[RMDB]
RNA sequence: GGGAACGACUCGAGUAGAGUCGAAAACUCACUAACUACAAAAUAAUUCAUUUAGCAUAAAAUAUGCUAAUUUCCUCUAGAGGUAGAGUGACUUACUUUUCCCAAUUCUAGUUUGAAAAAUUUCAGGGAAGGACUGUGAUUAACCCAGCUCAUGUUAACUGAUACGUAAUUUCGAUUACGUAUCAGUAAAAGAAACAACAACAACAAC
Reactivity to 2A3 in 0.01 (KOAc 150mM, MgCl2 10mM, bicine 150mM(pH8.5), 24C), signal-to-noise 5, nucleotides 027 to 156: c010u040c020a010c020u070a170a030c010u100a070c070a090a180a120a270u250a190a190u170u160c050a040u050u060u020a010g000c020a010u100a120a240a210a210u260a150u060g020c000u010a010a030u050u060u060c020c020u100c040u090a060g040a030g080g040u030a010g020a010g030u020g050a030c040u080u160a040c010u090u140u030u030c000c010c000a010a030u070u020c020u040a040g060u040u140u140g070a090a060a010a060a100u090u210u170c080a050g000g000g050a040a010g040g000a020c030u040g010u030g090a090u090u100a050a040c010c010c000a020g000c030u030c060a030u060g040u060u060a030
Reactivity to DMS in 0.01 (KOAc 150mM, MgCl2 10mM, bicine 150mM(pH8.5), 24C), signal-to-noise 3, nucleotides 027 to 156: c050u000c010a080c010u010a090a170c010u000a130c010a040a130a150a140u010a080a090u000u010c060a060u000u010u010a020g000c000a050u000a080a150a110a200u010a030u000g010c010u000a020a050u000u000u000c030c020u000c070u000a140g020a180g020g030u000a040g010a080g000u000g010a070c070u010u000a080c070u010u000u010u000c010c000c010a090a210u000u000c040u000a070g030u000u020u020g010a040a080a060a110a070u010u000u010c080a100g010g020g020a090a090g000g010a060c040u000g060u010g020a180u000u010a120a090c030c020c010a120g030c070u010c080a120u000g000u000u000a100
Chemical mapping of a 207-nucleotide RNA with 2A3 and DMS. The data come from the RNA Mapping Database (RMDB), library OK3TST.